The record gives the reactivity of an RNA of 170 nucleotides to DMS and 2A3. Reactivities are given for positions 27 through 129. For 2A3 the reverse transcriptase was SuperScript II with manganese. The reactions ran in a buffer of 150 mM KOAc, 10 mM MgCl2 and 150 mM bicine (pH 8.5), at 24 C. Reactivities are rounded to 0.1 and cut off at 0 and 3.

RNA sequence: GGGAACGACUCGAGUAGAGUCGAAAACGUCCAUCCCCACCCCCGGGUGUCCCCCCAGGAAUGGCGGGACCCCACUCGACAGGGUCCGCGUACCAUCCUUUCUUACCUGAUGGCCGGCAUGGUCCCAAACGCUAAGGCUUCGGCCUUAGCAAAAGAAACAACAACAACAAC
Reactivity to DMS in 0.01 (KOAc 150mM, MgCl2 10mM, bicine 150mM(pH8.5), 24C), signal-to-noise 5, nucleotides 027 to 129: c130g000u040c080c020a230u020c020c000c030c040a280c030c000c000c030c060g000g000g000u000g000u040c010c010c010c070c020c040a030g000g070a000a000u030g000g000c110g000g000g000a060c100c000c000c000a060c140u090c130g030a060c100a170g000g000g070u010c010c030g080c070g100u040a150c020c050a010u030c020c040u020u060u050c090u070u080a140c120c030u030g020a100u050g010g010c060c030g040g030c060a070u070g000g000u000c070c010c040a000a090a150c150
Reactivity to 2A3 in 0.01 (KOAc 150mM, MgCl2 10mM, bicine 150mM(pH8.5), 24C), signal-to-noise 7, nucleotides 027 to 129: c020g070u020c000c000a060u040c010c000c000c000a050c010c000c000c000c000g000g000g000u080g050u010c010c000c000c000c000c000a010g040g090a120a080u020g010g010c000g000g000g000a010c000c000c010c010a030c020u190c040g090a050c050a110g030g010g000u020c010c000g160c010g030u040a080c010c000a030u060c010c020u060u140u080c030u090u100a180c020c010u030g030a050u040g040g020c020c010g020g020c040a080u100g010g000u030c010c000c000a060a050a020c050